Notes: Chemical mapping of a 177-nucleotide RNA with DMS. It was measured as part of the RMDB library OK2TST. For DMS the reverse transcriptase was MarathonRT.
RNA sequence: GGGAACGACUCGAGUAGAGUCGAAAACUCGGCUCAAAUUGCCAAUAGGUCAGCACCUAUGUGGUUUAGAACAAGGCAAAAUGGUUUCUAAUGUAGCAGCCAAGGCUGAGGUUAGACCCAAAGGAAAUAAAAGCUAGGAGUUCGCUCCUAGCUUUUAAAAAGAAACAACAACAACAAC
Reactivity to DMS in 0.01 (KOAc 150mM, MgCl2 10mM, bicine 150mM(pH8.5), 24C), signal-to-noise 1, nucleotides 027 to 126: c010u000c020g010g010c000u010c200a070a100a170u000u000g010c000c020a090a020u000a060g010g000u000c090a090g090c260a190c000c010u000a010u000g010u000g050g050u000u000u000a070g020a040a110c080a070a080g010g030c090a030a030a090a200u000g010g000u000u010u010c000u000a070a070u010g000u010a050g000c050a000g000c020c020a060a120g000g000c030u000g000a010g010g010u000u010a090g010a190c050c010c000a070a070a140g000g000a070a090a100